[RMDB]
RNA sequence: GGGAACGACUCGAGUAGAGUCGAAAAUGGAUUCUUAGGUCACUCAGCAUGCGUAACAGUAGCAAUAUUUGCACCUCGUCCACAGCUGUUCCUGAAUCUUUUGGAGCAACGUCGCGGUGGCGAUGAAUCCACUAUCAGGUUUCGACCUGAUAGUGGAAAAAGAAACAACAACAACAAC
Reactivity to 2A3 in 0.01 (KOAc 150mM, MgCl2 10mM, bicine 150mM(pH8.5), 24C), signal-to-noise 3, nucleotides 027 to 126: u040g030g030a030u030u040c010u060u150a070g080g000u050c020a010c060u020c000a020g020c030a060u100g030c030g060u030a050a050c010a080g020u040a010g000c010a050a050u110a110u170u110u100g000c010a050c000c010u030c020g060u000c030c020a060c010a040g020c010u010g000u010u020c030c000u040g090a120a130u100c000u060u210u090u050g040g000a050g000c020a020a100c050g070u050c020g020c020g090g030u060g020g000c010g000a000u050g040a000a050
Reactivity to DMS in 0.01 (KOAc 150mM, MgCl2 10mM, bicine 150mM(pH8.5), 24C), signal-to-noise 4, nucleotides 027 to 126: u010g010g010a060u000u010c020u000u020a120g010g020u010c060a060c070u010c040a040g000c010a100u000g000c060g000u000a060a100c100a060g020u010a080g030c040a060a060u010a150u000u010u000g020c030a120c080c030u000c100g010u010c020c040a040c060a070g020c070u010g010u020u000c000c000u030g000a060a100u000c110u000u000u010u010g010g010a070g000c070a040a070c100g010u010c060g020c050g010g030u010g000g020c020g010a050u000g010a090a110
The record gives the reactivity of an RNA of 177 nucleotides to 2A3 and DMS.
DMS adducts were read by reverse transcription with MarathonRT.